[RMDB]
RNA sequence: GGGAACGACUCGAGUAGAGUCGAAAAGUUAUGCUCUCGCUGCCUAAUGGCGGUGCGGGAAACCCACUCUAAAGUCCUUAGGGUUAGCCCCUUAAGGCGGGGUUAGGAGGCACCUGGCAACAGAAGCUGAAACUGUGCACAUUCGUGUGCACAGUAACCUUGGUGUAGAAUUCGUUCUACACCAAGGAAAAGAAACAACAACAACAAC
Reactivity to DMS in 0.01 (KOAc 150mM, MgCl2 10mM, bicine 150mM(pH8.5), 24C), signal-to-noise 1, nucleotides 027 to 156: g000u000u010a070u030g010c000u000c030u000c000g010c000u010g030c000c020u010a170a110u000g060g030c060g020g010u010g040c090g020g000g000a080a060a130c000c010c010a110c050u010c100u010a060a050a120g020u000c000c000u010u000a050g000g020g030u000u010a190g000c220c250c000c010u000u010a030a040g000g060c000g010g000g000g040u000u000a100g000g000a300g020g010c000a080c030c010u000g000g040c040a050a250c030a090g000a020a130g000c010u020g010a160a070a030c010u000g010u000g020c010a030c010a140u000u000c300g000u010g000u000g030c010a000c030a030g000u000a000a060
Reactivity to 2A3 in 0.01 (KOAc 150mM, MgCl2 10mM, bicine 150mM(pH8.5), 24C), signal-to-noise 4, nucleotides 027 to 156: g070u130u120a100u300g050c020u000c000u000c010g010c000u020g010c000c020u300a300a170u240g010g000c020g020g070u040g010c030g020g000g000a070a040a030c020c040c000a040c040u190c090u160a150a110a270g300u000c000c000u000u000a000g000g000g010u010u080a020g010c000c060c000c000u020u050a000a010g000g000c000g000g000g000g000u020u110a120g050g110a030g030g010c000a010c000c000u040g270g000c000a010a000c000a030g010a000a000g000c010u030g000a100a010a010c000u000g000u000g020c000a010c010a020u050u120c170g130u040g000u000g020c000a000c000a000g000u000a000a010